Chemical mapping of a 177-nucleotide RNA with DMS and 2A3. Source: RMDB library OK1LIB, as collected in RNAgym.

RNA sequence: GGGAACGACUCGAGUAGAGUCGAAAAGAGGACAUUUCUAAUGCUGUAGUUCCAAACUCAGCCCUCAUUGUUCUUAUGGAGGAGAGCCUGAUGCUGCGCUCAUCACUUCCCAGCAUGAUGGGGAGAACGAAAAGACGUUAUUCGUAACGUCUUUUCGAAAAGAAACAACAACAACAAC
Reactivity to DMS in 0.01 (KOAc 150mM, MgCl2 10mM, bicine 150mM(pH8.5), 24C), signal-to-noise 5, nucleotides 027 to 126: g000a040g000g000a050c070a060u020u000u010c090u010a080a100u020g010c030u000g000u050a040g010u010u020c140c090a070a120a120c020u010c010a040g000c020c030c030u010c020a030u000u010g010u000u000c020u000u020a110u010g000g000a040g020g000a050g010a050g020c020c030u000g010a130u050g020c130u020g000c060g010c010u010c020a040u010c090a100c020u000u000c010c020c090a080g000c160a090u020g000a060u000g020g000g000g000a080g010a040a160
Reactivity to 2A3 in 0.01 (KOAc 150mM, MgCl2 10mM, bicine 150mM(pH8.5), 24C), signal-to-noise 9, nucleotides 027 to 126: g150a020g060g030a030c040a080u080u120u000c110u140a110a070u150g000c010u020g050u080a010g020u110u120c110c000a040a020a030c020u020c010a010g000c000c000c000u030c010a020u010u050g030u030u010c010u030u090a110u160g070g010a030g020g010a020g010a010g040c000c030u080g020a170u160g040c130u050g020c040g010c030u010c010a150u050c020a090c030u020u000c010c010c000a010g020c040a070u160g020a040u020g050g000g000g000a050g020a040a020